[RMDB]
RNA sequence: GGGAACGACUCGAGUAGAGUCGAAAACGGCCGAUAUCUCACCCUGGUCGAGGCGGUGUUGUGUGGUGUAGAUGUUCGCGAUUGUCUCGGAAGCCCCCAACACCCGCCAGUAAGUCAUCGGCUCGGGUCGUAAAUAUCCCUUCGGGGAUAUUUACGAAAAAGAAACAACAACAACAAC
Reactivity to 2A3 in 0.01 (KOAc 150mM, MgCl2 10mM, bicine 150mM(pH8.5), 24C), signal-to-noise 1, nucleotides 027 to 126: c010g060g000c010c020g030a080u100a140u130c100u020c010a050c030c020c080u040g000g070u110c150g030a080g000g120c100g030g000u010g010u000u030g030u000g040u100g040g000u190g080u120a070g040a140u090g090u110u060c110g020c040g170a150u040u300g110u100c050u020c040g000g010a110a050g010c010c000c000c000c000a000a000c000a010c000c030c000g000c000c000a010g000u040a090a040g020u000c060a030u000c040g000g000c030u070c050g050g060g000
Reactivity to DMS in 0.01 (KOAc 150mM, MgCl2 10mM, bicine 150mM(pH8.5), 24C), signal-to-noise 2, nucleotides 027 to 126: c040g000g000c000c010g020a040u000a050u000c030u010c080a170c120c100c030u000g050g010u010c040g000a060g010g020c070g000g030u000g000u000u000g010u010g000u010g030g010u010g000u010a080g000a120u000g010u020u010c080g020c080g010a170u030u030g000u000c070u010c020g020g020a250a300g000c010c010c030c110c020a030a010c010a030c020c040c040g000c010c010a080g020u010a070a110g000u010c070a070u000c010g000g010c000u000c070g000g010g000